[RMDB]
RNA sequence: GGGAACGACUCGAGUAGAGUCGAAAAAUAUCGUGAUCUCUAAUGAGCGUCCUCAUACUGUCCAAGGUGUUCAACCAUUUUACAAUGAAUAUUUAUGGCCUUGGUCGGUAACUGCGCAAGUGAGAUACCAGCUAUAUUUCUUCGGAAAUAUAGCUGGAAAAGAAACAACAACAACAAC
Reactivity to 2A3 in 0.01 (KOAc 150mM, MgCl2 10mM, bicine 150mM(pH8.5), 24C), signal-to-noise 3, nucleotides 027 to 126: a000u090a050u070c040g040u070g060a030u030c000u020c050u060a130a080u140g030a040g060c000g000u000c000c030u050c010a050u040a030c000u000g000u000c000c010a030a010g040g000u070g110u160u110c060a080a080c040c000a000u020u070u060u060a100c100a040a020u060g040a180a010u140a130u170u180u110a090u200g070g000c000c010u010u000g010g010u000c020g000g000u030a030a040c070u080g020c030g000c010a010a120g020u020g060a020g000a020u020a040
Reactivity to DMS in 0.01 (KOAc 150mM, MgCl2 10mM, bicine 150mM(pH8.5), 24C), signal-to-noise 2, nucleotides 027 to 126: a060u010a070u000c180g000u000g010a050u000c000u000c000u020a120a110u010g000a110g010c000g010u010c090c070u020c230a200u020a000c020u000g010u000c000c000a010a010g000g010u000g010u000u020c090a080a130c150c050a040u000u010u000u000a150c180a060a040u010g000a070a080u010a070u000u020u010a070u030g020g000c000c000u010u000g000g000u000c000g010g000u010a000a090c130u010g010c020g000c050a050a100g010u000g020a060g020a050u000a150